[RMDB]
This 207-nucleotide RNA was probed chemically with 2A3 and DMS. For DMS the reverse transcriptase was MarathonRT. 2A3 adducts were read by reverse transcription with SuperScript II with manganese. The DMS profile rests on 2,162 reads.
RNA sequence: GGGAACGACUCGAGUAGAGUCGAAAAUCGGGACGAUCCACGGGGCGGUGUAGGUGCCGUCACCCUUGAACGUGACCGAGAGAUCACCUGUGGAGCUGACCGCCACCGGAGCAGCGGCAGUCACUGUCGGGGCUGCGACCGGGGCCUGAGAUGGUGCCACUUAUACGAACUUCGGUUCGUAUAAGUGAAAAGAAACAACAACAACAAC
Reactivity to 2A3 in 0.01 (KOAc 150mM, MgCl2 10mM, bicine 150mM(pH8.5), 24C), signal-to-noise 2, nucleotides 027 to 156: u040c000g000g010g010a000c010g020a070u020c030c020a060c060g000g000g030g010c060g000g000u070g030u140a260g090g180u300g090c010c000g000u030c030a190c020c000c000u000u040g000a080a000c020g010u030g100a120c010c010g030a030g000a000g010a060u030c040a060c080c010u000g020u050g050g070a050g050c020u020g040a050c010c040g030c020c010a140c020c000g000g000a020g000c010a000g010c000g000g000c000a020g120u300c120a120c300u030g010u050c010g000g000g260g190c010u040g040c010g080a130c000c000g010g000g010g030c010c010u050g060a060g020a050u150g010g020u030g060c010
Reactivity to DMS in 0.01 (KOAc 150mM, MgCl2 10mM, bicine 150mM(pH8.5), 24C), signal-to-noise 1, nucleotides 027 to 156: u040c030g050g000g030a080c040g000a100u000c020c030a050c080g000g020g050g000c040g000g080u000g030u000a110g040g000u020g040c020c070g170u020c010a080c020c020c060u010u000g000a050a050c050g040u010g000a130c000c000g000a240g020a220g010a020u010c070a050c020c010u040g050u000g030g000a150g020c050u010g030a160c030c030g010c010c000a070c010c030g000g030a300g030c010a020g000c000g030g030c000a090g000u000c070a070c070u010g000u000c010g010g020g020g020c020u000g000c010g020a130c010c000g020g020g030g010c000c050u000g000a210g000a110u000g000g000u000g000c140
Values cover nucleotides 27 to 156. The reactions ran in a buffer of 150 mM KOAc, 10 mM MgCl2 and 150 mM bicine (pH 8.5), at 24 C. It was measured as part of the RMDB library OK3TST.